[RMDB]
RNA sequence: GGGAACGACUCGAGUAGAGUCGAAAACAUAACGAGGUUCGGCACGACAUACUGGCAUCCGAUGCCCGCCAACUGGCGGCCACGUUGUCCCGCGAUCUGCUCUGGCCGCUCCUGGUACUGAACCGUCCUGGCAGUCCCGACGUGCGCCGGGCGCCGCCCGAAGACCUUACUUCGGUAAGGUCUUCGGAAAAGAAACAACAACAACAAC
Reactivity to 2A3 in 0.01 (KOAc 150mM, MgCl2 10mM, bicine 150mM(pH8.5), 24C), signal-to-noise 1, nucleotides 027 to 156: c050a010u160a060a050c020g070a040g040g000u060u120c030g020g000c050a000c040g080a010c090a080u190a070c090u140g010g020c000a000u090c160c110g140a010u010g030c030c000c000g000c030c020a080a150c140u190g040g000c000g000g010c050c010a020c030g030u000u090g030u060c000c040c010g040c000g060a060u010c010u160g030c000u000c010u110g000g000c000c040g000c010u030c000c030u060g030g000u060a030c000u040g010a100a060c000c000g060u040c000c100u110g010g040c000a030g030u150c060c040c000g030a140c090g030u080g000c100g050c010c010g010g010g030c000g000c000c000g050c000
The record gives the reactivity of an RNA of 207 nucleotides to 2A3.
The RNA was probed in 150 mM KOAc, 10 mM MgCl2 and 150 mM bicine (pH 8.5) at 24 C.
2A3 adducts were read by reverse transcription with SuperScript II with manganese.